[RMDB]
RNA sequence: GGGAACGACUCGAGUAGAGUCGAAAAGCUUAUAGUGGGCAAAAUACCUGCCAAGUACUUGUCUUCCCUUGGGUGAAGGAGGAUGGCCCUGAUAGUAUUUACCCAAGAUUAUAGAAAAUCAGCCUAACUCACUUAAAUUAUUCGUAAUUUAAGUGAGAAAAGAAACAACAACAACAAC
Reactivity to 2A3 in 0.01 (KOAc 150mM, MgCl2 10mM, bicine 150mM(pH8.5), 24C), signal-to-noise 3, nucleotides 027 to 126: g030c030u140u090a040u070a210g100u130g030g020g000c020a060a040a050a120u060a070c000c010u010g050c020c020a040a030g030u050a080c030u060u100g030u030c000u020u030c020c030c000u030u070g070g000g000u090g040a050a020g020g010a010g050g020a060u040g030g010c040c020c000u020g020a030u040a090g050u060a080u020u040u070a040c000c000c000a000a010g040a020u140u150a080u050a150g140a070a120a000a050u050c010a010g060c010c010u030a060a040
Reactivity to DMS in 0.01 (KOAc 150mM, MgCl2 10mM, bicine 150mM(pH8.5), 24C), signal-to-noise 5, nucleotides 027 to 126: g000c050u010u010a080u020a100g020u000g020g010g010c020a080a060a070a100u010a040c030c050u010g000c040c030a070a100g010u000a090c040u000u010g010u000c020u000u000c010c020c020u000u010g010g010g030u010g000a060a030g020g010a050g010g010a180u000g000g000c080c110c080u000g010a100u010a080g010u010a040u000u000u000a110c010c000c000a040a090g000a090u000u010a090u000a160g000a100a060a060a070u010c070a090g010c050c040u010a060a200